RNA sequence: GGGAACGACUCGAGUAGAGUCGAAAACAUGGUGGCAAGUACGACGCGAUAUUGCCCCACCUGCAAUAGAAGCGUAGACAUCAACUGUAGCGAGAGCUACUCAACUUAUGGACCUUAGAGCAUGCGAAGACGACGGGUCCUGUCGGAAUUCGCUAGACGGUAUGGUACUGUUCGCAGUACCAUACCGAAAAGAAACAACAACAACAAC
Reactivity to 2A3 in 0.01 (KOAc 150mM, MgCl2 10mM, bicine 150mM(pH8.5), 24C), signal-to-noise 2, nucleotides 027 to 156: c020a030u130g000g030u040g060g020c040a020a060g040u060a060c050g050a050c020g110c040g110a080u070a080u110u030g030c020c000c010c000a030c020c080u040g000c030a000a030u020a060g140a180a000g000c020g030u000a060g070a070c030a010u090c050a050a180c110u090g000u000a000g000c000g010a020g020a000g030c030u030a010c000u000c040a050a230c000u080u140a020u060g020g000a020c050c020u120u120a090g030a000g060c020a120u080g000c030g020a090a000g100a100c000g000a000c010g000g000g080u010c000c000u050g000u000c000g000g010a140a070u010u010c040g000c020u000a010g010a040

Structure probing data (2A3) for a 207-nucleotide construct. For 2A3 the reverse transcriptase was SuperScript II with manganese.